[RMDB]
RNA sequence: GGGAACGACUCGAGUAGAGUCGAAAACAAUUAUUCAAGCGUGCGUAUUACACGGUAAUACCGCUAUAUUAUCGUUGGUUAUUGAUAAAUAUACUACCAUUAAUCGUGAUUGGUUUUAUUACGCAUUAAGUCAAUUAACCGAAAAUGUAUUUAUGGCAUGGAUGAUACGGUUCGCCGUAUCAUCCAUAAAAGAAACAACAACAACAAC
Reactivity to 2A3 in 0.01 (KOAc 150mM, MgCl2 10mM, bicine 150mM(pH8.5), 24C), signal-to-noise 3, nucleotides 027 to 156: c000a020a140u120u130a120u140u220c080a060a040g010c010g030u070g020c040g000u030a020u040u090a060c300a080c130g140g010u000a000a000u000a010c010c000g000c020u040a040u010a030u270u070a120u090c070g010u020u050g030g020u060u040a050u040u060g080a080u120a150a140a000u190a050u080a110c060u060a020c010c010a010u030u060a030a030u030c040g010u030g020a030u000u020g000g010u010u030u040u050a010u000u070a010c040g020c080a000u080u100a190a000g000u000c020a010a050u050u040a030a020c000c010g020a020a010a000a020u100g060u120a040u010u050u020a020u010g000g030c000
Reactivity to DMS in 0.01 (KOAc 150mM, MgCl2 10mM, bicine 150mM(pH8.5), 24C), signal-to-noise 2, nucleotides 027 to 156: c060a190a090u010u000a150u000u060c080a100a080g020c030g040u000g000c120g000u010a100u000u000a040c030a090c050g050g000u000a010a040u000a120c020c110g080c000u000a220u000a050u000u000a010u000c010g000u000u000g010g010u000u000a040u000u030g000a060u000a070a050a180u000a100u000a130c050u000a060c050c000a010u000u000a020a030u000c050g030u000g000a300u000u030g020g010u000u000u020u000a030u010u010a100c060g030c250a190u010u000a060a230g000u000c030a080a040u010u000a010a070c070c050g000a010a090a270a050u000g010u020a010u000u000u000a030u030g010g010c080

An RNA of 207 nucleotides, treated with 2A3 and DMS and read out base by base. Values cover nucleotides 27 to 156. For DMS the reverse transcriptase was MarathonRT. The RNA was probed in 150 mM KOAc, 10 mM MgCl2 and 150 mM bicine (pH 8.5) at 24 C. The DMS profile rests on 2,035 reads.